[RMDB]
RNA sequence: GGGAACGACUCGAGUAGAGUCGAAAAAGUGUAGCAACUAGGACGGCGGGGCGUGCCGGAGAUGAAUGGGCGUCCUCGCAGAGCUGCAGAGGUUUUCCUGUCCGCGUUGCAGGGUCAACUCUGUGAGGCGGCGUGCUUCGUUCGCGAGGUGUGCCGCAAAAGAAACAACAACAACAAC
Reactivity to DMS in 0.01 (KOAc 150mM, MgCl2 10mM, bicine 150mM(pH8.5), 24C), signal-to-noise 9, nucleotides 027 to 126: a060g010u010g010u000a040g010c020a080a060c120u030a120g010g010a060c050g000g010c020g010g000g000g010c020g010u010g000c010c010g000g010a150g020a140u040g010a120a120u050g000g000g010c010g000u030c010c010u010c010g010c010a040g000a090g000c020u000g000c020a030g010a090g000g010u020u010u000u010c020c010u000g010u010c010c040g000c180g000u010u000g000c010a040g000g000g000u030c150a050a160c020u000c000u000g000u010g000a100g000
Reactivity to 2A3 in 0.01 (KOAc 150mM, MgCl2 10mM, bicine 150mM(pH8.5), 24C), signal-to-noise 9, nucleotides 027 to 126: a000g150u120g020u070a030g030c040a050a100c070u090a050g090g040a040c050g050g010c000g010g010g020g000c020g010u080g160c000c000g060g020a120g030a090u210g070a100a070u060g010g010g000c010g020u140c000c000u000c010g000c000a010g010a010g020c020u030g000c000a000g020a030g020g010u030u020u050u050c010c000u020g030u050c020c030g050c080g090u110u100g000c000a000g000g000g010u040c010a020a020c010u000c000u000g000u000g010a020g050

Conditions: 150 mM KOAc, 10 mM MgCl2 and 150 mM bicine (pH 8.5), 24 C. This 177-nucleotide RNA was probed chemically with DMS and 2A3. 2A3 is a SHAPE reagent: it acylates the 2'-hydroxyl of flexible nucleotides of all four kinds. For DMS, 97,555 sequencing reads were counted. It was measured as part of the RMDB library OK1LIB. Reactivities are rounded to 0.1 and cut off at 0 and 3.